The data come from the RNA Mapping Database (RMDB), library OK2TRN. An RNA of 177 nucleotides, treated with DMS and read out base by base. The RNA was probed in 150 mM KOAc, 10 mM MgCl2 and 150 mM bicine (pH 8.5) at 24 C. Values cover nucleotides 27 to 126.
[RMDB]
RNA sequence: GGGAACGACUCGAGUAGAGUCGAAAAUCACGCAAAUGGAUCAACCCAAGGACAUUUCCUUAUACUAUUGAAUGAUUUUCCAUUUUGACAAGUUGCAAGAGUUGCAGUCAUUCCAGAUUAAGGAUGCAGUCUCGAUCUGUUUCGACAGAUCGAGACUAAAAGAAACAACAACAACAAC
Reactivity to DMS in 0.01 (KOAc 150mM, MgCl2 10mM, bicine 150mM(pH8.5), 24C), signal-to-noise 1, nucleotides 027 to 126: u010c010a060c240g040c200a040a020a110u010g000g020a080u000c100a120a130c040c020c030a150a110g010g000a100c110a030u010u010u010c010c000u000u000a050u000a230c070u000a020u010u000g000a040a010u010g010a030u000u000u020u020c230c030a080u000u010u000u030g010a070c070a140a060g010u020u020g000c030a010a050g000a080g000u000u000g020c050a060g000u000c030a030u020u000c020c200a060g010a250u000u000a010a000g000g010a070u020g000c140